[RMDB]
RNA sequence: GGGAACGACUCGAGUAGAGUCGAAAAAUCUUGGCUCAGUGCAACCUCUGCCUUCCAGGCCCACGGGAUUCUUGUGCCUCAGCCUCCCGAGUAGCUGGCAUUACAGGCAUGCACCACCAUGCUUGGCGAAGACACCAUUGUUCGCAAUGGUGUCUUCAAAAGAAACAACAACAACAAC
Reactivity to 2A3 in 0.01 (KOAc 150mM, MgCl2 10mM, bicine 150mM(pH8.5), 24C), signal-to-noise 1, nucleotides 027 to 126: a020u040c030u040u050g060g000c020u030c110a070g040u050g080c020a020a050c000c000u010c010u020g020c000c000u050u070c030c030a030g070g020c000c030c020a020c060g050g000g010a050u080u030c030u070u120g090u080g040c000c020u060c020a000g020c000c000u040c020c010c000g010a030g030u080a020g010c040u040g000g000c020a030u050u130a080c000a020g000g030c000a000u030g000c010a040c010c000a030c060c000a030u030g020c040u050u050g000g030c020
Reactivity to DMS in 0.01 (KOAc 150mM, MgCl2 10mM, bicine 150mM(pH8.5), 24C), signal-to-noise 3, nucleotides 027 to 126: a040u000c040u010u010g020g020c070u010c060a100g020u010g000c070a080a120c090c040u010c020u010g020c030c040u010u010c040c060a100g020g000c040c030c040a070c130g010g000g000a080u000u010c040u010u010g000u000g020c000c040u000c090a080g000c020c050u000c010c020c010g020a100g020u010a050g010c050u000g000g020c060a080u000u010a090c030a000g010g030c020a020u000g010c100a170c040c100a080c200c010a020u010g000c010u000u000g010g010c210

This 177-nucleotide RNA was probed chemically with 2A3 and DMS. Conditions: 150 mM KOAc, 10 mM MgCl2 and 150 mM bicine (pH 8.5), 24 C. For DMS the reverse transcriptase was MarathonRT.